[RMDB]
RNA sequence: GGGAACGACUCGAGUAGAGUCGAAAAGAUAUGGAAAUUAGACAUGCGUACUCCGGUCGGAAACGACCGUAAACGCAACAGCUUAUUUCCUAAGUCAAACAUAGUAGUUCUUCGGAACUACUAUGAACAUAUGAAUAAAGUUCGCUUUAUUCAUAUGAAAAGAAACAACAACAACAAC
Reactivity to 2A3 in 0.01 (KOAc 150mM, MgCl2 10mM, bicine 150mM(pH8.5), 24C), signal-to-noise 6, nucleotides 027 to 126: g020a020u070a060u140g000g010a010a020a020u030u040a060g050a080c080a120u090g000c010g010u050a110c080u020c090c010g000g000u000c010g010g020a070a070a060c010g000a010c000c000g000u010a020a070a000c000g020c010a020a050c040a040g030c000u010u020a000u010u010u010c010c000u020a190a020g060u050c050a080a050a090c000a020u000a000g000u000a000g000u020u000c000u040u060c300g040g000a000a000c000u000a000c000u000a000u000g000a010a000
Reactivity to DMS in 0.01 (KOAc 150mM, MgCl2 10mM, bicine 150mM(pH8.5), 24C), signal-to-noise 9, nucleotides 027 to 126: g000a040u000a300u010g000g000a000a010a010u000u000a010g010a040c070a200u000g010c000g020u000a050c070u000c230c010g010g010u000c000g010g000a090a110a220c010g010a010c000c000g000u000a030a080a010c000g010c000a020a050c240a130g000c000u000u000a020u000u000u000c000c000u000a050a130g000u000c030a110a110a300c010a000u000a000g010u000a000g000u000u000c000u000u010c180g020g010a010a000c000u000a000c000u000a000u000g000a090a190
Source: RMDB library TTRDEL, as collected in RNAgym. This 177-nucleotide RNA was probed chemically with 2A3 and DMS. Reactivities are given for positions 27 through 126.